[RMDB]
The data come from the RNA Mapping Database (RMDB), library M2RFPK.
The record gives the reactivity of an RNA of 207 nucleotides to 2A3.
Conditions: 150 mM KOAc, 10 mM MgCl2 and 150 mM bicine (pH 8.5), 24 C.
For 2A3, 369 sequencing reads were counted.
RNA sequence: GGGAACGACUCGAGUAGAGUCGAAAAUGCUGUCGUUGACAGCGCCCAGCGCUUCACAACCUGAAAGAAGCGCCUGUUAUCAGGACGGUUGAUCCAUUUACCGGUGCAGACCUCUGCAAACACCGGGUUUAACAAGCAUCUUUCGAGAUGCUUGUAAGUGGCACAUAGAGUUCGCUCUAUGUGCCACAAAAGAAACAACAACAACAAC
Reactivity to 2A3 in 0.01 (KOAc 150mM, MgCl2 10mM, bicine 150mM(pH8.5), 24C), signal-to-noise 1, nucleotides 027 to 156: u200g030c020u020g000u050c070g300u180u300g000a000c000a010g000c000g000c000c000c000a030g030c000g010c000u000u020c030a040c020a140a130c080c000u030g000a030a030a000g000a000a000g050c030g000c010c000u080g000u020u050a130u300c000a000g040g000a040c050g020g000u000u010g010a100u060c080c030a040u060u030u260a090c000c000g000g050u010g000c030a050g130a270c000c050u190c060u240g050c060a080a140a000c080a040c000c010g000g070g070u080u130u050a020a000c000a000a000g010c000a000u000c030u010u080u070c040g180a030g000a000u000g000c000u000u000g010u000a000a000